[RMDB]
Conditions: 150 mM KOAc, 10 mM MgCl2 and 150 mM bicine (pH 8.5), 24 C. The record gives the reactivity of an RNA of 177 nucleotides to 2A3 and DMS. The DMS profile rests on 12,977 reads. For 2A3, 18,575 sequencing reads were counted.
RNA sequence: GGGAACGACUCGAGUAGAGUCGAAAAGAAAGGCAGCCAAUGCAGCCCACGUAGCCACUCGAUGCAUGCUUUUGCAUGCCGCCCACGACUGAGGGCAGCUGCGGCACUGAGGGCAGCUGCCGAAAGACAGCGUAUAUUUAUUCGUAAAUAUACGCUGAAAAGAAACAACAACAACAAC
Reactivity to 2A3 in 0.01 (KOAc 150mM, MgCl2 10mM, bicine 150mM(pH8.5), 24C), signal-to-noise 8, nucleotides 027 to 126: g110a040a080a010g020g000c000a010g010c020c050a100a040u220g040c040a050g030c030c010c000a030c020g020u010a030g010c020c020a070c050u070c090g100a050u160g000c010a000u010g000c010u200u250u230u300g000c020a000u010g000c010c020g010c000c010c000a080c070g290a090c150u180g070a190g010g010g000c000a000g000c020u010g000c000g020g000c050a030c110u130g040a160g000g020g000c000a000g000c000u000g000c000c000g000a020a010a000g060a010
Reactivity to DMS in 0.01 (KOAc 150mM, MgCl2 10mM, bicine 150mM(pH8.5), 24C), signal-to-noise 8, nucleotides 027 to 126: g000a080a140a150g000g010c010a010g010c020c100a110a100u020g010c160a110g000c030c040c020a120c100g010u000a090g010c010c040a090c040u000c080g010a130u000g000c010a010u000g010c020u000u010u020u010g010c000a010u000g010c000c140g010c010c010c010a100c120g010a120c180u010g010a130g010g010g020c010a060g010c020u000g000c050g010g020c130a090c070u000g020a080g020g000g020c050a080g000c010u000g000c000c000g000a030a060a110g010a190
For 2A3 the reverse transcriptase was SuperScript II with manganese.